[RMDB]
RNA sequence: GGGAACGACUCGAGUAGAGUCGAAAAUGGGCUGGCGGUGACGACUCACGUCGCAACGGGCAGUGUGGGCGAGUUCCGCCAUGGUCUGCUGAUCGUGGUGGCAGGUGCGGCCGUCAUCGUGGUUGCCCCUGCUCUACGCUUUCGAGCGUAGAGCAGGAAAAGAAACAACAACAACAAC
Reactivity to 2A3 in 0.01 (KOAc 150mM, MgCl2 10mM, bicine 150mM(pH8.5), 24C), signal-to-noise 2, nucleotides 027 to 126: u130g000g020g000c040u080g080g010c010g000g010u000g000a010c000g000a010c020u010c040a020c010g080u030c020g000c020a000a080c030g010g090g000c080a120g030u080g030u110g110g140g040c060g020a140g060u270u070c030c000g030c000c000a010u060g030g020u020c040u120g040c090u150g070a070u090c010g030u010g010g020u050g010g030c040a090g020g170u040g010c100g040g000c050c000g020u010c000a020u010c010g040u010g030g200u110u130g010c000c000
Reactivity to DMS in 0.01 (KOAc 150mM, MgCl2 10mM, bicine 150mM(pH8.5), 24C), signal-to-noise 1, nucleotides 027 to 126: u010g020g000g010c020u010g040g000c000g000g010u000g000a020c020g000a030c020u010c010a050c050g020u010c000g020c040a070a050c020g000g000g000c070a050g020u000g020u010g020g010g010c040g010a200g020u020u030c040c010g020c000c000a030u010g000g000u020c020u000g000c150u010g010a030u000c000g010u000g000g040u000g000g010c140a070g020g030u000g000c150g010g010c020c000g000u000c010a010u000c020g010u000g010g020u000u010g000c010c030
The record gives the reactivity of an RNA of 177 nucleotides to 2A3 and DMS. The reactions ran in a buffer of 150 mM KOAc, 10 mM MgCl2 and 150 mM bicine (pH 8.5), at 24 C. It was measured as part of the RMDB library OK2TRN. Values are in units of 0.01, from 0 to 300, in steps of 10.